Structure probing data (DMS and 2A3) for a 207-nucleotide construct. The DMS profile rests on 2,540 reads. For 2A3 the reverse transcriptase was SuperScript II with manganese. DMS adducts were read by reverse transcription with MarathonRT. The RNA was probed in 150 mM KOAc, 10 mM MgCl2 and 150 mM bicine (pH 8.5) at 24 C.
RNA sequence: GGGAACGACUCGAGUAGAGUCGAAAAACGCGGAGUACGGUCCGCGACAACACUUCUUUCGACCCGCUAACCGAGACCUAUGGGUCGUUAAAUUACGUCUCUAUCUUACUCACAUAACAUCGCACAAAAAACGUGGUUCGGUUCGCCGAACCACGAACAGCUUAUAAUACUUCGGUAUUAUAAGCUGAAAAGAAACAACAACAACAAC
Reactivity to DMS in 0.01 (KOAc 150mM, MgCl2 10mM, bicine 150mM(pH8.5), 24C), signal-to-noise 1, nucleotides 027 to 156: a080c070g050c000g010g000a070g040u000a110c090g030g000u000c000c000g030c000g000a160c050a050a170c080a110c140u000u000c050u000u000u000c030g020a050c000c010c020g000c160u000a100a130c070c100g020a140g000a100c030c060u000a070u000g010g060g020u010c000g030u000u020a010a020a050u000u000a060c050g000u000c010u000c030u030a080u000c070u000u000a060c060u000c080a090c050a100u000a080a040c110a100u000c030g000c050a090c070a000a030a100a050a060a170c010g060u000g000g000u000u000c000g010g020u000u010c280g030c010c000g020a040a000c010c000a000c000g000a000a070
Reactivity to 2A3 in 0.01 (KOAc 150mM, MgCl2 10mM, bicine 150mM(pH8.5), 24C), signal-to-noise 6, nucleotides 027 to 156: a000c020g010c010g010g010a030g040u160a100c060g040g170u020c010c010g010c010g000a020c030a050a020c040a030c040u130u110c030u050u200u120c000g000a000c010c010c000g020c150u210a030a010c020c010g020a010g010a040c000c000u030a060u240g010g000g010u000c000g010u010u020a010a010a020u150u070a010c020g020u000c010u000c010u010a140u080c030u080u130a090c050u090c070a080c010a130u150a140a050c020a110u150c110g000c110a050c120a070a070a020a080a080a040c040g000u000g010g000u000u000c000g030g000u030u030c090g030c060c000g000a000a010c000c000a000c000g000a000a000